[RMDB]
RNA sequence: GGGAACGACUCGAGUAGAGUCGAAAAAACGCUGACAACGGGCAGCGUCACCUAUCUCCGCUUUCUUGAUGAGGACGGAAAGGUUUUGGCAGAGUCCAAGGCAACCUCCACCUCAAACGUUGUCACCCCCUGGUAACCUCUUCGGAGGUUACCAGGGAAAAGAAACAACAACAACAAC
Reactivity to 2A3 in 0.01 (KOAc 150mM, MgCl2 10mM, bicine 150mM(pH8.5), 24C), signal-to-noise 2, nucleotides 027 to 126: a000a000c010g000c020u000g030a020c040a060a140c130g050g250g000c000a010g000c000g040u080c000a070c000c000u090a130u150c060u040c010c000g080c030u010u130u070c080u030u170g100a200u080g050a080g030g030a110c130g000g030a000a060a120g050g010u060u020u020u010g010g010c020a090g030a040g300u060c000c000a000a030g010g010c020a010a010c000c000u020c000c000a000c000c010u000c000a040a080a030c040g010u000u020g000u000c000a040c030c010

The record gives the reactivity of an RNA of 177 nucleotides to 2A3.
The RNA was probed in 150 mM KOAc, 10 mM MgCl2 and 150 mM bicine (pH 8.5) at 24 C.
The data come from the RNA Mapping Database (RMDB), library OK1LIB.